[RMDB]
RNA sequence: GGGAACGACUCGAGUAGAGUCGAAAAGCUUCGCGCUACCGCUGCACGCGUGCGGCGGCCGUUUUCGCGCGAGGGUCCGCCUGCGCGUGCCGCGCGCCGUGAGCGCGCCGCGCCGACGCAUGUGCGACUAUUAUGCAGCAUUCGUGCUGCAUAAUAGAAAAGAAACAACAACAACAAC
Reactivity to 2A3 in 0.01 (KOAc 150mM, MgCl2 10mM, bicine 150mM(pH8.5), 24C), signal-to-noise 4, nucleotides 027 to 126: g030c020u020u040c030g000c000g020c020u060a050c030c000g000c010u030g000c010a020c040g190c060g100u040g020c060g030g000c000g010g010c050c020g130u130u080u080u180c060g000c000g010c020g010a040g020g010g030u060c050c010g020c010c020u020g000c000g000c010g020u060g010c020c010g010c000g000c000g000c010c020g300u270g080a140g020c000g000c010g010c010c010g020c030g000c010c030g050a080c020g030c020a050u150g080u150g050c020g030a010
Reactivity to DMS in 0.01 (KOAc 150mM, MgCl2 10mM, bicine 150mM(pH8.5), 24C), signal-to-noise 3, nucleotides 027 to 126: g000c030u010u000c010g020c020g030c020u010a140c040c000g000c060u000g050c020a090c050g020c300g040u000g030c040g000g010c000g000g000c100c110g000u000u000u010u000c230g000c020g020c020g000a020g000g020g000u000c050c040g020c010c000u000g000c000g000c030g010u000g020c030c180g010c010g020c060g020c030c040g000u010g000a120g020c020g000c030g010c040c110g010c030g000c020c000g010a100c040g010c030a020u010g020u010g020c030g000a160

Description:
The record gives the reactivity of an RNA of 177 nucleotides to 2A3 and DMS. It was measured as part of the RMDB library OK2TRN. Values cover nucleotides 27 to 126. 2A3 adducts were read by reverse transcription with SuperScript II with manganese. Values are in units of 0.01, from 0 to 300, in steps of 10. The 2A3 profile rests on 8,620 reads.